[RMDB]
RNA sequence: GGGAACGACUCGAGUAGAGUCGAAAACCGAGAACUUUGGGGUGAAUCGGCCUCACCGCCCUCGACGCGAGGACGGUCCGCCGUAGGGCAAACCUUCCGCGCCACACCGCCCGAACCCGACAGCUAACAAUCCCUUCAGGUUCGCCUGAAGGGAUUGAAAAGAAACAACAACAACAAC
Reactivity to DMS in 0.01 (KOAc 150mM, MgCl2 10mM, bicine 150mM(pH8.5), 24C), signal-to-noise 5, nucleotides 027 to 126: c010c000g000a110g000a120a100c140u010u020u010g000g010g000g010u010g010a060a130u030c040g010g010c010c100u030c210a020c030c000g010c010c000c000u000c020g000a180c290g010c100g030a020g000g010a020c020g010g010u010c300c300g000c000c000g020u010a050g040g040g000c050a080a100a110c110c060u000u010c060c030g010c060g010c000c000a040c100a090c120c120g020c000c030c000g000a100a040c030c010c020g000a170c100a040g020c100u000a090a220
Reactivity to 2A3 in 0.01 (KOAc 150mM, MgCl2 10mM, bicine 150mM(pH8.5), 24C), signal-to-noise 6, nucleotides 027 to 126: c000c010g040a050g040a050a100c120u180u130u220g040g010g000g010u020g010a060a030u050c010g000g000c020c020u050c030a010c000c000g010c010c000c000u010c010g250a240c130g030c140g110a000g000g020a010c000g000g020u030c010c030g000c000c000g020u020a030g010g020g000c020a040a050a080c000c000u140u040c060c010g040c010g000c020c010a040c000a010c020c040g000c000c010c000g030a010a010c000c000c000g020a020c020a020g030c020u060a040a060